[RMDB]
RNA sequence: GGGAACGACUCGAGUAGAGUCGAAAAGAAAGUGUGCACUUGAUACCGCGUGACUUCGGUCACGUAGUGGCAGCGCGCAGGACUUUGCUGCGACUGCUUAGUCCUGUGGUAUCUUGUGCUCACGAAAACCACCGGCGAUGUUCGCAUCGCCGGUGGUAAAAGAAACAACAACAACAAC
Reactivity to 2A3 in 0.01 (KOAc 150mM, MgCl2 10mM, bicine 150mM(pH8.5), 24C), signal-to-noise 1, nucleotides 027 to 126: g090a050a020a010g000u030g000u000g000c010a000c000u020u030g000a000u000a010c000c010g000c000g000u000g010a020c020u070u000c250g060g030u000c010a000c000g030u020a010g000u040g030g030c150a060g120c060g000c000g000c110a000g020g000a030c040u080u070u080g050c020u090g000c010g130a090c240u100g010c000u010u010a000g030u060c000c000u000g000u020g010g000u010a000u020c000u020u000g000u000g010c000u040c000a000c010g010a000a020a000